[RMDB]
RNA sequence: GGGAACGACUCGAGUAGAGUCGAAAAUUCAUUUAAAUGAAUUGAAACAAAUUGAAUACAAGUGGAUGUAGGAUAACCGUCCGUCCUUUACAUUGGUAUAAAAGUGAUCUAAAAUUCUAUUUAUAAUUGCGCUCUCGCGUGUUCGCACGCGAGAGAACGAUAUAGAGUUCUUCGGAACUCUAUAUCGAAAAGAAACAACAACAACAAC
Reactivity to 2A3 in 0.01 (KOAc 150mM, MgCl2 10mM, bicine 150mM(pH8.5), 24C), signal-to-noise 1, nucleotides 027 to 156: u000u000c000a000u020u090u240a210a210a080u070g000a010a050u010u030g100a070a060a060c030a030a190a060u160u200g040a120a020u100a050c030a100a060g160u030g130g000a030u100g000u030a010g010g050a010u030a130a070c040c030g050u000c030c020g060u080c070c000u030u070u000a000c010a060u010u060g000g050u190a060u090a190a050a000a000g000u000g100a030u030c060u110a000a060a060a240u180u010c040u070a110u190u130u040a260u130a150a300u020u210g010c010g000c030u000c010u010c000g000c000g000u000g020u070u000c130g010c070a000c000g020c000g000a000g000a000g000a000a000